[RMDB]
RNA sequence: GGGAACGACUCGAGUAGAGUCGAAAACACUACCAAGCUUGUGUUUCGAAAGGACAUGGUGGCCAGGUUAAUUGCCUCGGGUACGGUCACAACGUGAAGGAUGUUCCAAUGGGCAAUCCGCAGCCAAGCCCCUACGUGUAGUGUCUGUAAUACUACAGAAUACAACAGGCUUCGGCCUGUUGUAUUCAAAAGAAACAACAACAACAAC
Reactivity to 2A3 in 0.01 (KOAc 150mM, MgCl2 10mM, bicine 150mM(pH8.5), 24C), signal-to-noise 2, nucleotides 027 to 156: c020a000c020u100a080c070c050a060a010g050c060u030u040g000u020g010u060u050u040c030g060a140a040a000g040g020a050c030a090u160g020g010u030g000g060c010c020a030g050g000u060u170a060a030u080u110g040c010c040u070c160g080g000g040u080a040c030g030g050u020c040a010c020a120a110c120g080u020g030a030a030g130g000a090u110g030u060u070c000c050a140a080u250g030g030g000c000a000a050u040c010c010g080c040a000g010c010c010a000a020g000c000c000c000c000u070a060c070g110u090g010u080a040g010u000g020u010c070u090g070u070a120a000u040a100c050u010a010c010a030